An RNA of 207 nucleotides, treated with 2A3 and DMS and read out base by base. DMS adducts were read by reverse transcription with MarathonRT. The reactions ran in a buffer of 150 mM KOAc, 10 mM MgCl2 and 150 mM bicine (pH 8.5), at 24 C. 2A3 adducts were read by reverse transcription with SuperScript II with manganese.

[RMDB]
RNA sequence: GGGAACGACUCGAGUAGAGUCGAAAAAGAUCGAUUACGAUCGAUAAAUGAUGCCCCUCACCCACCUCUGAAGAUCCCAGGUGGGCGAGGGAACGGAGCACGGGAUCACGAGCAGUACGCUGCUCGAAAAAGAACUAGACCUUCGGGUCUAGUUCAAGAAUUAUUAUCCGUUCGCGGAUAAUAAUUCAAAAGAAACAACAACAACAAC
Reactivity to 2A3 in 0.01 (KOAc 150mM, MgCl2 10mM, bicine 150mM(pH8.5), 24C), signal-to-noise 4, nucleotides 027 to 156: a000g060a010u010c000g030a040u120u180a150c160g010a010u010c000g000a010u110a070a150a090u160g090a020u170g040c000c000c000c000u000c000a010c000c000c000a000c010c000u020c060u100g100a110a050g000a020u010c000c000c000a000g000g010u000g000g000g000c000g000a000g000g000g010a030a040c070g070g080a070g080c110a080c130g010g000g000a000u010c020a010c040g000a000g000c000a000g010u080a030c230g050c120u000g000c000u000c000g010a000a000a000a010a010g000a000a000c000u010a010g000a010c000c020u030u130c270g070g000g000u000c000u000a000g000u000u000c000a000a000
Reactivity to DMS in 0.01 (KOAc 150mM, MgCl2 10mM, bicine 150mM(pH8.5), 24C), signal-to-noise 1, nucleotides 027 to 156: a180g000a010u000c010g000a230u000u000a080c140g050a080u000c000g000a140u000a030a210a110u000g030a120u010g000c050c010c010c010u000c020a020c000c000c010a040c030c000u000c000u000g040a090a160g000a130u050c010c000c010a040g010g030u020g030g020g040c010g000a030g000g000g020a010a010c100g040g020a130g010c050a110c060g010g000g010a070u000c020a160c000g010a050g020c000a040g010u000a080c300g050c010u010g010c010u000c000g040a020a030a100a150a090g000a020a010c010u000a000g010a030c000c010u000u010c300g070g070g050u000c000u000a000g020u000u000c000a040a120